An RNA of 177 nucleotides, treated with 2A3 and DMS and read out base by base.
RNA sequence: GGGAACGACUCGAGUAGAGUCGAAAAGUUGCUGGCGGCGAGCACCGGUAUUGUCGGGGCGACGGUUGUGACCAUGGGCAUUCUCUCGCUGCCAUCGAUGUUAAAGAGCGGAUAUCGACCGUCACUGGUUCCUGAAUGGUUUCGACCAUUCAGGAACAAAAGAAACAACAACAACAAC
Reactivity to 2A3 in 0.01 (KOAc 150mM, MgCl2 10mM, bicine 150mM(pH8.5), 24C), signal-to-noise 1, nucleotides 027 to 126: g050u050u040g020c010u020g000g000c000g020g000c010g000a010g050c120a060c020c000g100g020u210a190u150u090g110u050c040g010g000g020g120c030g000a020c030g010g120u110u130g050u040g080a050c040c000a120u110g020g030g080c020a010u140u040c070u040c010u010c040g010c020u000g000c010c000a020u010c000g020a010u010g060u170u190a060a090a030g060a030g060c030g070g000a050u070a040u240c100g080a060c030c000g010u020c010a000c100u040g090
Reactivity to DMS in 0.01 (KOAc 150mM, MgCl2 10mM, bicine 150mM(pH8.5), 24C), signal-to-noise 2, nucleotides 027 to 126: g030u000u000g010c080u000g010g010c000g020g010c030g000a030g010c300a150c050c070g000g040u010a060u010u000g010u010c090g020g010g020g010c060g000a020c120g010g000u010u030g030u010g000a070c020c020a110u010g030g000g010c050a050u000u000c080u010c030u000c010g010c030u000g010c000c000a020u020c010g020a040u010g010u000u020a050a100a110g000a230g000c070g000g000a100u010a040u000c070g050a090c030c000g010u010c030a090c090u010g020

It was measured as part of the RMDB library OK2TRN.